[RMDB]
This 207-nucleotide RNA was probed chemically with 2A3. Reactivities are given for positions 27 through 156.

RNA sequence: GGGAACGACUCGAGUAGAGUCGAAAAUUCCUAGGUCCGGAGUCUACUUCCAUCUGGUCCGUUCGGGCCCUCUUCGCCGGGGGAGCCCCCUCUCCAUCCUCAUCCUUCUUUCCGAGAAUUCCUUUGAUGUUUCCUAGCCAGGGAUUUUCAUCCUCAACUAUCUUAUUUAGUUCGCUAAAUAAGAUAGAAAAGAAACAACAACAACAAC
Reactivity to 2A3 in 0.01 (KOAc 150mM, MgCl2 10mM, bicine 150mM(pH8.5), 24C), signal-to-noise 2, nucleotides 027 to 156: u050u000c010c000u020a100g020g030u000c020c010g050g020a010g060u020c080u180a120c030u280u040c070c000a120u000c040u030g030g020u020c020c040g000u060u090c050g050g000g000c010c020c000u030c040u150u170c050g090c070c050g000g000g000g020g010a030g020c020c000c000c000c010u070c010u000c010c000a070u060c010c030u020c020a080u070c010c020u020u050c000u070u060u010c040c040g030a050g040a110a050u060u010c000c020u090u090u110g060a030u040g010u010u050u070c010c010u020a020g020c060c070a050g000g050g020a030u100u070u050u060c010a030u030c000c000u070c010a040a060